[RMDB]
Structure probing data (2A3 and DMS) for a 177-nucleotide construct. As a SHAPE reagent, 2A3 marks flexible, mostly unpaired nucleotides at the ribose 2'-OH. For 2A3 the reverse transcriptase was SuperScript II with manganese. Values cover nucleotides 27 to 126. The reactions ran in a buffer of 150 mM KOAc, 10 mM MgCl2 and 150 mM bicine (pH 8.5), at 24 C.

RNA sequence: GGGAACGACUCGAGUAGAGUCGAAAACGACGAUAGUUCGCUAUCGUCGCAAGGGCUGUUUUUCUCGCUGACUUUCAGCCCCAAACAAAAAAGUCAGCAUAAUAAUCGGUGGCUUCGGCCACCGAAAGAGUUAGAUGUACUUCGGUACAUCUAACUCAAAAGAAACAACAACAACAAC
Reactivity to 2A3 in 0.01 (KOAc 150mM, MgCl2 10mM, bicine 150mM(pH8.5), 24C), signal-to-noise 1, nucleotides 027 to 126: c020g010a000c000g000a010u010a000g020u060u050c160g000c140u010a000u000c010g020u010c010g000c040a060a110g000g000g000c000u010g040u000u010u010u010u010c080u050c100g000c010u000g010a010c000u010u020u010c000a000g010c000c000c020c060a020a020a000c020a000a010a030a000a000a010g000u010c000a000g010c000a000u000a000a000u010a010a050u030c010g000g000u000g000g010c010u020u060c160g090g000c000c000a000c000c000g000a010a000a010
Reactivity to DMS in 0.01 (KOAc 150mM, MgCl2 10mM, bicine 150mM(pH8.5), 24C), signal-to-noise 1, nucleotides 027 to 126: c040g010a020c010g000a030u000a000g010u000u040c180g030c000u000a000u000c000g000u000c000g020c130a120a100g000g000g000c010u000g000u000u000u020u020u000c070u000c270g020c000u000g000a020c000u010u010u000c010a010g000c000c000c000c180a010a000a290c030a010a000a010a000a010a000g010u000c000a010g000c000a010u010a040a110u000a140a070u000c000g040g000u000g020g020c030u010u030c210g030g020c010c000a000c000c000g000a010a030a020